RNA sequence: GGGAACGACUCGAGUAGAGUCGAAAACUUUCUUCCGCUCACCCACUGCUCGAGAACCUCUUCUCUCCCUCCGCGGCCCUUCUUCGACUCGGACCGGCUCAUCUCGACAAGAGGCGGCAGUCCUCAGUGCUCUUACUCUUUUCUGUAAAGAGGAGACCAACUAUUGAUGCUUCGGCAUCAAUAGUUGAAAAGAAACAACAACAACAAC
Reactivity to 2A3 in 0.01 (KOAc 150mM, MgCl2 10mM, bicine 150mM(pH8.5), 24C), signal-to-noise 1, nucleotides 027 to 156: c020u100u110u090c010u110u080c050c050g000c050u000c040a090c010c040c000a040c040u040g070c030u000c030g020a020g040a230a110c020c000u060c030u140u050c030u010c020u010c060c000c000u010c000c040g030c050g060g020c010c000c000u100u010c000u060u050c000g010a030c040u030c010g030g060a050c020c010g030g000c010u030c000a090u000c010u010c030g040a080c080a110a060g000a000g000g000c040g080g020c050a030g040u070c030c010u000c000a030g020u000g070c040u060c000u010u120a300c000u060c000u060u080u080u080c040u240g270u300a040a000a000g010a020g020g000a000g010a050c040

Chemical mapping of a 207-nucleotide RNA with 2A3. The reactions ran in a buffer of 150 mM KOAc, 10 mM MgCl2 and 150 mM bicine (pH 8.5), at 24 C. Reactivities are given for positions 27 through 156. The 2A3 profile rests on 556 reads.